[RMDB]
RNA sequence: GGGAACGACUCGAGUAGAGUCGAAAAGGGGUCUAUGUAGCGUCUAUGAAGAUCUUGUCAGCUCUGAAGCCUCCACGGAGCUUGGAUUUAGAUUGGAGACGUGAAAGACGGAGGCACCCAAAACCCAGCUCCUCCGAUUCGUCGGAGGAGCUGGGAACCACUUAUUAGUGUUCGCACUAAUAAGUGGAAAAGAAACAACAACAACAAC
Reactivity to 2A3 in 0.01 (KOAc 150mM, MgCl2 10mM, bicine 150mM(pH8.5), 24C), signal-to-noise 1, nucleotides 027 to 156: g120g000g010g010u010c010u040a130u080g020u030a010g040c000g010u000c040u070a300u260g140a200a140g040a190u070c020u100u090g110u110c020a000g010c020u000c000u030g060a070a010g020c000c010u000c000c010a010c020g000g020a020g010c030u050u180g110g000a080u210u180u300a090g020a050u010u160g150g090a020g020a000c000g060u050g020a060a020a020g040a000c000g000g000a010g010g000c010a010c000c000c000a050a050a040a040c000c000c010a010g000c040u010c000c000u000c020c070g000a010u050u100c240g040u010c000g150g040a000g010g010a010g000c020u040g000g000g020a000a000

Background
Structure probing data (2A3) for a 207-nucleotide construct. Conditions: 150 mM KOAc, 10 mM MgCl2 and 150 mM bicine (pH 8.5), 24 C. It was measured as part of the RMDB library RNAMAK. Values cover nucleotides 27 to 156.